[RMDB]
RNA sequence: GGGAACGACUCGAGUAGAGUCGAAAAGAUAUGGAUUGCUAUACUUCAACAGCUCGGAAACGAGACAUGAAGGUAGUCAAUCCUAAGUCAAAAGAGAGUGUCACAAGUUCGCUUGUGACACUCUCAAGAUUAGACUUCUCUUCGGAGAAGUCUAAUCAAAAGAAACAACAACAACAAC
Reactivity to 2A3 in 0.01 (KOAc 150mM, MgCl2 10mM, bicine 150mM(pH8.5), 24C), signal-to-noise 3, nucleotides 027 to 126: g030a000u090a020u140g010g010a000u010u000g000c010u000a040u070a300c000u030u010c000a050a100c040a150g040c000u010c000g040g040a070a080a050c010g000a020g040a050c000a020u090g000a000a010g000g000u010a010g020u040c030a000a000u010c000c000u000a070a030g050u040c030a000a000a300a010g000a000g000a000g000u010g010u000c000a020c010a010a010g020u070u110c200g150c180u020u000g000u000g000a000c000a000c010u000c000u000c000a000a000
Reactivity to DMS in 0.01 (KOAc 150mM, MgCl2 10mM, bicine 150mM(pH8.5), 24C), signal-to-noise 3, nucleotides 027 to 126: g000a040u000a300u010g000g000a020u000u000g000c010u000a010u000a130c010u000u000c000a040a070c260a160g020c010u010c010g010g000a120a080a190c010g020a020g000a050c100a150u000g000a010a000g010g010u000a000g010u020c010a010a000u000c000c000u010a030a080g010u000c040a060a090a130a100g000a020g000a010g010u000g000u000c000a000c000a010a020g010u000u010c240g000c000u000u000g000u010g000a000c000a000c000u010c000u000c000a010a050